[RMDB]
RNA sequence: GGGAACGACUCGAGUAGAGUCGAAAAACGGGUGACGAGAUCAGUGUCACCAGCAUCGAGAAAGAAUGGUUGAUCCGCCACAAGCGCAUUGCUGCGCCGGCCGAUCAGGCCGCUGCCGCCGGCAAGGCCACUUACAAAGAUUCGUCUUUGUAAGUGGAAAAGAAACAACAACAACAAC
Reactivity to 2A3 in 0.01 (KOAc 150mM, MgCl2 10mM, bicine 150mM(pH8.5), 24C), signal-to-noise 9, nucleotides 027 to 126: a000c060g050g000g010u020g010a010c040g030a030g030a300u180c100a070g100u050g030u180c010a000c020c000a000g040c010a050u160c040g070a060g130a120a120a020g090a060a100u100g060g020u060u050g020a030u010c010c020g010c030c010a040c040a070a040g020c020g000c060a060u040u300g060c060u050g000c020g000c000c000g000g000c010c000g020a050u090c040a030g040g010c000c010g000c030u040g030c020c020g070c020c030g020g000c020a020a020g050g020
Reactivity to DMS in 0.01 (KOAc 150mM, MgCl2 10mM, bicine 150mM(pH8.5), 24C), signal-to-noise 9, nucleotides 027 to 126: a100c100g000g010g020u000g010a020c010g010a150g010a110u010c180a110g010u010g010u000c050a020c010c010a070g010c100a080u010c070g010a170g010a110a080a080g000a070a080u010g010g010u000u000g000a030u000c010c140g000c010c010a040c100a110a180g000c040g010c020a070u010u010g010c170u000g010c020g010c020c040g000g000c010c150g000a060u010c140a080g000g010c010c010g010c090u000g010c060c040g010c090c040g000g000c060a070a060g010g010